[RMDB]
RNA sequence: GGGAACGACUCGAGUAGAGUCGAAAAUGAAAUAGCGUGUGCAAGACGCUGAUCUUGCCAUGAUCUGGAACUUUUGUGCUGAGGUCCGAGUUCCAGGGUAUCAUGUCGGACCUUAGCACUAAUUAAAACUUGACUACUUGUUCGCAAGUAGUCAAGUAAAAGAAACAACAACAACAAC
Reactivity to 2A3 in 0.01 (KOAc 150mM, MgCl2 10mM, bicine 150mM(pH8.5), 24C), signal-to-noise 3, nucleotides 027 to 126: u180g020a030a000a030u120a060g060c020g020u010g090u140g030c000a010a000g010a000c050g030c300u040g030a270u000c000u010u010g020c030c000a010u010g040a100u050c030u050g080g050a060a090c040u090u100u080u090g020u020g000c000u010g010a000g000g010u000c000c010g010a020g000u060u040c040c020a000g050g000g040u160a070u250c050a060u200g120u080c000g000g010a000c020c000u000u000a000g000c000a000c000u010a000a020u080u140a040a030a020
Reactivity to DMS in 0.01 (KOAc 150mM, MgCl2 10mM, bicine 150mM(pH8.5), 24C), signal-to-noise 3, nucleotides 027 to 126: u000g020a060a120a080u010a060g020c030g030u010g000u010g000c010a010a010g020a020c020g030c300u000g010a090u000c000u000u000g010c020c010a010u000g000a070u010c050u010g000g030a150a090c070u000u010u010u000g000u000g020c010u000g010a010g000g000u000c000c020g010a060g000u010u010c110c060a030g020g020g020u010a080u010c100a060u000g030u000c000g010g000a020c010c000u000u000a010g010c000a010c030u000a020a050u000u010a060a050a050

Source: RMDB library M2PK90, as collected in RNAgym. Structure probing data (2A3 and DMS) for a 177-nucleotide construct. The DMS profile rests on 3,092 reads. Conditions: 150 mM KOAc, 10 mM MgCl2 and 150 mM bicine (pH 8.5), 24 C. 2A3 adducts were read by reverse transcription with SuperScript II with manganese. For 2A3, 2,481 sequencing reads were counted. DMS adducts were read by reverse transcription with MarathonRT. Reactivities are given for positions 27 through 126.